[RMDB]
RNA sequence: GGGAACGACUCGAGUAGAGUCGAAAAUGCUAAAGCACUUGCGAGUCUUGAGUGGACUAGAACUUCGGGCUUUUGAUCCUGCUGAAGCACUGAGGCCUGGAGCCCUGUGCAGGGUCACAGUGCUGGCAGGAACCAGUGCGUUCGCGCACUGGUUCCUAAAAGAAACAACAACAACAAC
Reactivity to 2A3 in 0.01 (KOAc 150mM, MgCl2 10mM, bicine 150mM(pH8.5), 24C), signal-to-noise 1, nucleotides 027 to 126: u080g040c010u060a090a000a030g000c000a040c080u090u140g030c050g050a020g010u000c000u160u170g170a160g000u210g000g050a070c030u050a060g050a130a030c010u080u080c040g000g010g010c000u080u060u030u100g070a080u020c000c000u000g010c000u080g160a070a020g000c040a020c020u010g000a050g010g030c000c030u080g040g250a080g030c040c040c080u120g080u160g030c000a010g000g010g020u000c010a000c000a010g000u000g000c000u020g000g050c010
Reactivity to DMS in 0.01 (KOAc 150mM, MgCl2 10mM, bicine 150mM(pH8.5), 24C), signal-to-noise 2, nucleotides 027 to 126: u000g010c020u010a030a080a060g000c010a040c080u010u010g020c100g020a080g010u010c020u000u000g000a110g020u020g050g030a070c080u000a060g000a100a060c050u010u010c100g000g020g010c030u010u000u020u000g000a130u000c000c000u000g000c010u000g000a090a100g000c030a040c000u020g000a070g000g010c020c000u000g040g010a160g000c000c040c200u000g020u010g030c000a240g010g000g010u000c020a080c050a000g020u000g010c000u000g010g010c030